Source: RMDB library TTRDES, as collected in RNAgym.
Structure probing data (DMS and 2A3) for a 177-nucleotide construct.
The RNA was probed in 150 mM KOAc, 10 mM MgCl2 and 150 mM bicine (pH 8.5) at 24 C.
For DMS the reverse transcriptase was MarathonRT.
For 2A3 the reverse transcriptase was SuperScript II with manganese.
[RMDB]
RNA sequence: GGGAACGACUCGAGUAGAGUCGAAAAGAUAUGGACCAUUCUUAAGGGAGCAAAGUUUAUCGGAAACGAUAGAUUUGCGAAGAACUUAAGAGAUGGUCCUAAGUCAAAACCCACCUUCGGGUGGGAAGUGCAUAAAUUUGUUCGCAAAUUUAUGCACAAAAGAAACAACAACAACAAC
Reactivity to DMS in 0.01 (KOAc 150mM, MgCl2 10mM, bicine 150mM(pH8.5), 24C), signal-to-noise 2, nucleotides 027 to 126: g010a030u000a300u000g000g000a020c000c000a010u000u010c000u000u010a010a000g000g000g000a090g030c000a000a010a020g000u010u000u000a010u010c000g000g000a120a080a300c010g010a010u000a010g010a030u000u000u000g010c000g000a100a180g000a120a170c000u000u000a000a020g020a050g010a010u000g010g000u000c000c000u000a000a060g010u000c050a100a080a120a170c010c010c000a010c020c000u000u020c270g010g000g040u010g000g010g010a000a030
Reactivity to 2A3 in 0.01 (KOAc 150mM, MgCl2 10mM, bicine 150mM(pH8.5), 24C), signal-to-noise 2, nucleotides 027 to 126: g030a000u070a050u190g000g000a010c000c000a020u020u010c000u010u010a010a010g050g010g040a050g000c020a020a080a230g070u060u020u020a020u010c000g000g050a110a040a040c000g000a000u000a010g020a040u010u010u020g000c050g100a170a010g030a040a020c010u030u020a000a020g010a020g040a050u020g010g000u000c000c000u000a040a000g000u000c030a000a020a060a200c030c000c010a010c020c000u030u060c300g200g000g000u030g010g060g000a030a020